The record gives the reactivity of an RNA of 177 nucleotides to DMS and 2A3. DMS adducts were read by reverse transcription with MarathonRT. For DMS, 6,114 sequencing reads were counted. Values cover nucleotides 27 to 126. The RNA was probed in 150 mM KOAc, 10 mM MgCl2 and 150 mM bicine (pH 8.5) at 24 C. The data come from the RNA Mapping Database (RMDB), library OK2TST.

RNA sequence: GGGAACGACUCGAGUAGAGUCGAAAAAGGUUGAGUUGAUUGAUCGUGACGAGAUCAAGGGUAAGAAUGGCGAAGUGUACGGGUAUGGUGUGACGUUGAAGGCUUACCCGGCCCAGAUUGGUAAGACCAAAAGUGAGUACUUCGGUACUCACUUUUGAAAAGAAACAACAACAACAAC
Reactivity to DMS in 0.01 (KOAc 150mM, MgCl2 10mM, bicine 150mM(pH8.5), 24C), signal-to-noise 4, nucleotides 027 to 126: a090g020g010u000u010g000a150g000u000u000g020a140u010u010g000a030u000c030g000u010g010a110c130g000a150g000a030u000c040a030a060g000g010g010u000a040a060g000a080a090u000g010g000c040g010a050a080g030u000g010u010a090c080g000g020g010u010a070u000g020g040u000g010u000g010a070c120g020u010u000g010a080a100g000g000c020u000u000a050c020c020c100g000g010c030c020c040a080g010a110u000u000g010g010u010a050a070g010a170c190
Reactivity to 2A3 in 0.01 (KOAc 150mM, MgCl2 10mM, bicine 150mM(pH8.5), 24C), signal-to-noise 1, nucleotides 027 to 126: a000g080g020u040u060g020a000g040u080u050g080a130u030u050g010a020u010c000g010u030g090a080c100g020a020g000a050u030c020a020a060g070g000g000u010a040a050g060a160a110u100g070g000c040g070a070a070g070u080g030u130a090c070g050g000g000u080a070u140g040g060u090g000u050g030a030c020g010u020u040g050a140a000g050g000c030u020u030a030c000c060c030g000g000c000c000c000a030g010a060u040u040g000g070u020a030a070g030a100c000